[RMDB]
RNA sequence: GGGAACGACUCGAGUAGAGUCGAAAAAAUCUGGCCGACCACAUCGUGGCCCUCAGCGAAGCGGUCGAUACUGUCAAGGAAGUCACCGGUAACGAUGUGCACCUGGUUGGGUAUUCACAGGGUGGCAGUACGCUACCAUCUUCGGAUGGUAGCGUACAAAAGAAACAACAACAACAAC
Reactivity to DMS in 0.01 (KOAc 150mM, MgCl2 10mM, bicine 150mM(pH8.5), 24C), signal-to-noise 2, nucleotides 027 to 126: a090a020u000c040u020g030g000c060c020g020a080c200c000a030c080a060u010c070g040u000g000g000c000c030c030u000c110a140g000c040g000a090a160g010c070g000g000u000c060g010a070u000a030c100u000g000u000c100a090a090g000g000a060a080g000u040c040a050c090c000g020g000u000a060a050c050g000a060u000g010u010g020c210a140c070c020u000g020g000u000u000g000g010g010u000a070u000u000c060a030c010a130g000g030g000u000g000g000c020a050
Reactivity to 2A3 in 0.01 (KOAc 150mM, MgCl2 10mM, bicine 150mM(pH8.5), 24C), signal-to-noise 1, nucleotides 027 to 126: a000a000u070c020u000g050g010c000c000g130a120c000c000a020c000a130u110c000g050u010g040g040c030c010c000u040c030a100g000c010g020a140a000g030c020g060g010u030c020g000a000u020a080c050u090g090u090c060a130a060g090g010a090a060g050u110c000a030c060c040g070g010u020a040a000c030g010a030u120g020u070g010c000a020c040c010u040g050g110u190u150g090g000g000u070a090u100u070c070a060c070a070g050g000g050u010g010g000c000a000